[RMDB]
Chemical mapping of a 177-nucleotide RNA with DMS and 2A3. For DMS the reverse transcriptase was MarathonRT. Values are in units of 0.01, from 0 to 300, in steps of 10.

RNA sequence: GGGAACGACUCGAGUAGAGUCGAAAAUCAUCGUUCUUCGGAACGAUGAAGUAUAACGCGGGCUCCGGACACAGGCGUAGCUGGCCUGCGAUAGUCACAGUAUGGGGCAAACUUUCGAGUUUGCCAAUACUCCCCUUACAUUCGUGUAAGGGGAGUAAAAAGAAACAACAACAACAAC
Reactivity to DMS in 0.01 (KOAc 150mM, MgCl2 10mM, bicine 150mM(pH8.5), 24C), signal-to-noise 4, nucleotides 027 to 126: u000c000a000u000c010g010u000u000c000u000u010c200g030g000a000a010c000g010a000u000g000a010a060g010u000a100u010a070a100c040g020c030g000g030g020c040u010c070c030g000g000a070c070a070c110a110g020g000c120g000u000a070g010c080u020g000g000c010c010u000g010c030g000a080u000a040g000u000c110a110c150a100g030u010a110u010g000g000g010g000c000a010a010a010c000u000u010u010c180g000a020g010u000u000u000g010c000c000a050a040
Reactivity to 2A3 in 0.01 (KOAc 150mM, MgCl2 10mM, bicine 150mM(pH8.5), 24C), signal-to-noise 2, nucleotides 027 to 126: u030c000a000u010c000g010u010u010c030u030u070c200g060g000a020a000c000g010a000u000g000a010a010g020u020a110u050a180a030c030g000c030g000g010g000c020u030c110c030g080g030a020c050a010c020a090g300g000c090g020u060a040g060c030u040g040g010c010c000u000g040c000g000a060u100a030g030u070c060a020c010a150g060u070a080u180g200g040g000g000c000a000a000a000c000u040u040u060c110g030a000g020u000u010u010g040c000c000a010a000